[RMDB]
RNA sequence: GGGAACGACUCGAGUAGAGUCGAAAAGAUAUGGAGUACCAUUCUUUUGACGCGUAAUCGGAAACGAUAGCGCGAUAAGAAUGUACUCCUAAGUCAAAACAUCAGAUAGCUUCGGCUAUCUGAUGAACCAACCUUAUUACUUCGGUAAUAAGGUUGGAAAAGAAACAACAACAACAAC
Reactivity to DMS in 0.01 (KOAc 150mM, MgCl2 10mM, bicine 150mM(pH8.5), 24C), signal-to-noise 6, nucleotides 027 to 126: g000a020u010a250u000g000g000a010g010u000a000c300c260a020u000u000c000u000u010u000u010g020a200c020g000c000g000u010a130a030u000c000g030g000a050a030a060c000g010a010u000a170g010c010g000c010g010a070u000a020a020g010a030a000u000g010u000a000c000u000c000c000u000a010a040g000u000c010a110a070a110a200c010a010u000c000a010g000a010u000a010g020c000u000u010c210g030g000c000u000a000u000c000u010g010a000u000g000a040a140
Reactivity to 2A3 in 0.01 (KOAc 150mM, MgCl2 10mM, bicine 150mM(pH8.5), 24C), signal-to-noise 6, nucleotides 027 to 126: g010a010u030a020u070g010g000a010g000u010a020c080c110a080u010u010c000u030u280u150u300g180a080c000g010c010g030u030a040a040u010c010g000g020a040a020a010c010g010a010u050a110g020c000g000c010g020a060u110a200a010g000a000a000u010g000u000a000c000u000c000c000u000a020a010g010u000c010a000a020a110a180c000a010u010c010a000g000a000u000a000g000c020u070u080c300g090g000c000u010a000u000c000u000g000a000u000g000a000a000

Chemical mapping of a 177-nucleotide RNA with DMS and 2A3.
The data come from the RNA Mapping Database (RMDB), library TTRDEL.
Reactivities are given for positions 27 through 126.
The RNA was probed in 150 mM KOAc, 10 mM MgCl2 and 150 mM bicine (pH 8.5) at 24 C.